[RMDB]
RNA sequence: GGGAACGACUCGAGUAGAGUCGAAAAGAUAUGGACUACACUUUGGAGCACCUAGUACACCGAUGAAAGUUAUCGGAAACGAUAACUGGAGGUGGACCGGUGCUAUGAAGAAGUGUAGUCCUAAGUCCGGUAGUCUAAUGUUCGCAUUAGACUACCGAAAAGAAACAACAACAACAAC
Reactivity to DMS in 0.01 (KOAc 150mM, MgCl2 10mM, bicine 150mM(pH8.5), 24C), signal-to-noise 2, nucleotides 027 to 126: g000a050u000a300u010g000g000a000c000u000a030c000a020c000u000u000u000g000g000a020g010c010a010c000c000u000a060g000u000a140c010a000c000c000g000a160u040g000a170a120a080g010u000u010a000u000c010g000g000a040a080a210c010g010a020u000a010a000c010u000g000g000a000g040g020u000g000g000a070c300c190g000g000u000g040c000u000a050u020g000a180a220g000a000a010g000u000g010u000a010g000u000c000c000u010a000a050g000u010c040